Chemical mapping of a 170-nucleotide RNA with 2A3 and DMS. The RNA was probed in 150 mM KOAc, 10 mM MgCl2 and 150 mM bicine (pH 8.5) at 24 C.

RNA sequence: GGGAACGACUCGAGUAGAGUCGAAAAUCCUCAGCUUUUUUCCUUGAGUUCACCCACUGCUCGAGGACGUCUUCCCUUCCCCCGCGAUUCUUCUUCGACUCGGCCCGGCUCAUUUCGGCAAAGGGCGCUCCACUGUCGUUCGCGACAGUGAAAAGAAACAACAACAACAAC
Reactivity to 2A3 in 0.01 (KOAc 150mM, MgCl2 10mM, bicine 150mM(pH8.5), 24C), signal-to-noise 9, nucleotides 027 to 129: u030c000c010u050c030a040g020c040u120u080u030u020u090u100c030c020u050u070g040a030g030u060u070c030a100c030c010c010a070c050u040g010c000u010c010g010a020g020g020a150c010g030u020c070u050u050c000c000c000u020u020c020c000c000c010c000g030c030g030a060u050u020c010u060u020c010u040u060c030g050a070c030u000c020g020g000c000c010c000g010g000c020u010c090a170u070u150u140c060g000g000c000a050a080a130g010g000g000c020g000c000u000c010
Reactivity to DMS in 0.01 (KOAc 150mM, MgCl2 10mM, bicine 150mM(pH8.5), 24C), signal-to-noise 6, nucleotides 027 to 129: u030c000c020u030c000a080g000c040u000u010u010u000u010u010c010c010u000u050g020a060g000u000u000c100a200c000c030c060a170c090u030g030c010u010c050g040a000g030g020a070c100g020u000c090u040u040c020c000c030u000u000c010c010c000c010c030g000c090g030a100u000u000c030u000u000c060u000u000c050g000a050c070u010c000g050g000c040c060c030g030g040c060u030c120a150u040u020u040c120g000g000c070a050a110a140g000g000g000c040g010c000u030c030